Source: RMDB library M2RFOK, as collected in RNAgym. The record gives the reactivity of an RNA of 207 nucleotides to DMS and 2A3. DMS adducts were read by reverse transcription with MarathonRT. For 2A3, 1,734 sequencing reads were counted.
RNA sequence: GGGAACGACUCGAGUAGAGUCGAAAAUCAGAAUCAGGCCGGAGUGUUUAGCGCUCCGUAAACACGGGCGUACAUCCAGCCGGUAGCCUGGUUCCUUGCAUUGAGUGAUGUACGGAGUUUAUAGAGCAAAAGAAAGACCUGUUCGCAGGUCUUUCAAGCAUAGCGAUUAGUUCGCUAAUCGCUAUGCAAAAGAAACAACAACAACAAC
Reactivity to DMS in 0.01 (KOAc 150mM, MgCl2 10mM, bicine 150mM(pH8.5), 24C), signal-to-noise 1, nucleotides 027 to 156: u030c010a020g000a040a010u000c030a050g080g050c010c040g020g000a150g050u000g010u000u000u010a180g010c060g020c000u000c010c000g090u000a020a020a110c070a100c030g020g000g060c020g040u000a050c050a080u010c050c030a190g020c010c050g000g050u000a050g010c040c010u000g000g020u010u000c000c060u000u010g010c050a150u000u010g010a210g030u000g030a080u010g030u000a010c000g010g000a160g000u010u000u000a090u010a110g000a130g020c070a100a040a160a170g000a030a020a060g010a020c020c000u000g010u000u000c300g030c000a010g030g010u000c000u000u000u000c000a000a100
Reactivity to 2A3 in 0.01 (KOAc 150mM, MgCl2 10mM, bicine 150mM(pH8.5), 24C), signal-to-noise 3, nucleotides 027 to 156: u090c000a010g010a000a000u020c000a010g000g010c000c010g010g020a010g020u070g050u090u170u300a100g050c030g010c000u000c010c000g000u020a000a020a000c170a020c030g040g010g000c010g000u020a010c020a030u020c040c020a040g020c000c000g010g000u020a000g000c000c000u000g000g020u010u000c070c040u070u100g020c010a070u050u120g020a050g090u120g010a030u010g030u040a040c030g080g020a040g020u070u120u030a160u130a070g070a030g040c060a050a010a070a040g000a000a000a000g000a000c000c010u000g030u080u080c210g010c070a020g000g000u000c000u010u000u000c010a010a010